[RMDB]
RNA sequence: GGGAACGACUCGAGUAGAGUCGAAAAGAUCUCACGUAUACUUCAGGGAAAUUGAAUUGGUCAUCGUGAUUGGGUGAAUCUAUGUUUAUAUAUCUCAUAACUAUAAGAUUCAGUACAUGAUGGUACACGUGACAUUUCCAUUCGUGGAAAUGUCACGAAAAGAAACAACAACAACAAC
Reactivity to DMS in 0.01 (KOAc 150mM, MgCl2 10mM, bicine 150mM(pH8.5), 24C), signal-to-noise 2, nucleotides 027 to 126: g010a090u000c020u010c000a110c130g020u000a060u020a110c060u000u020c010a060g020g010g000a040a110a110u000u000g000a110a140u020u020g010g000u000c050a030u000c060g050u000g000a160u030u050g000g000g010u000g000a000a000u000c000u000a020u000g010u050u020u000a020u000a070u050a110u020c180u010c150a030u000a000a020c010u010a100u000a120a060g040a010u000u000c000a060g010u010a010c020a010u020g010a020u000g000g010u000a110c050a180
Reactivity to 2A3 in 0.01 (KOAc 150mM, MgCl2 10mM, bicine 150mM(pH8.5), 24C), signal-to-noise 2, nucleotides 027 to 126: g060a090u040c000u020c000a100c060g120u030a070u080a100c040u040u130c030a040g010g060g060a010a130a040u030u090g030a070a170u140u160g060g040u010c010a010u000c030g020u010g000a250u040u070g120g060g040u070g000a020a020u000c010u030a130u080g040u000u010u020a060u000a030u010a050u200c040u000c140a030u000a080a000c020u070a020u040a070a100g010a000u000u000c020a000g070u020a020c000a010u000g020a000u030g040g020u030a060c080a000

Annotation
Chemical mapping of a 177-nucleotide RNA with DMS and 2A3. The data come from the RNA Mapping Database (RMDB), libraries RFM100 and RFMREP. The reactions ran in a buffer of 150 mM KOAc, 10 mM MgCl2 and 150 mM bicine (pH 8.5), at 24 C. 2A3 adducts were read by reverse transcription with SuperScript II with manganese.